RNA sequence: GGGAACGACUCGAGUAGAGUCGAAAAUAAAGAGCUGCUUUGAAAAUCUCCACAACUUGUGCAUGGUUUGCUUUACGUGGGUUGGUGAGCAUACAUGCGUCUUUUUGAGCAUUUUCGGCCAUCACCAAUGAUUUAAUGCGUUCGCGCAUUAAAUCAUAAAAGAAACAACAACAACAAC
Reactivity to DMS in 0.01 (KOAc 150mM, MgCl2 10mM, bicine 150mM(pH8.5), 24C), signal-to-noise 2, nucleotides 027 to 126: u020a120a130a190g000a170g030c160u010g030c070u000u030u010g010a030a090a120a080u010c020u010c000c120a110c100a060a060c100u010u010g020u010g040c040a030u000g020g000u000u020u000g020c020u000u000u000a050c070g030u010g020g000g020u000u000g020g010u000g010a050g000c040a050u000a110c080a000u000g020c030g020u010c020u000u000u000u010u000g000a160g020c100a040u010u010u000u010c100g000g060c020c050a030u010c060a100c040c050a090
Reactivity to 2A3 in 0.01 (KOAc 150mM, MgCl2 10mM, bicine 150mM(pH8.5), 24C), signal-to-noise 1, nucleotides 027 to 126: u080a020a030a020g050a000g020c130u060g010c010u030u050u170g060a010a010a020a030u030c020u010c040c000a090c030a140a140c070u080u140g030u040g030c050a050u020g060g130u050u100u040g020c040u060u100u150a100c070g060u130g180g070g030u100u120g000g010u040g000a000g050c010a020u030a040c020a010u040g000c030g060u070c010u010u110u050u110u130g020a020g050c050a020u100u000u020u020c010g040g020c000c000a060u030c010a010c010c000a030

The record gives the reactivity of an RNA of 177 nucleotides to DMS and 2A3. For DMS the reverse transcriptase was MarathonRT. The RNA was probed in 150 mM KOAc, 10 mM MgCl2 and 150 mM bicine (pH 8.5) at 24 C. The DMS profile rests on 1,315 reads. For 2A3, 757 sequencing reads were counted. It was measured as part of the RMDB library OK2TST.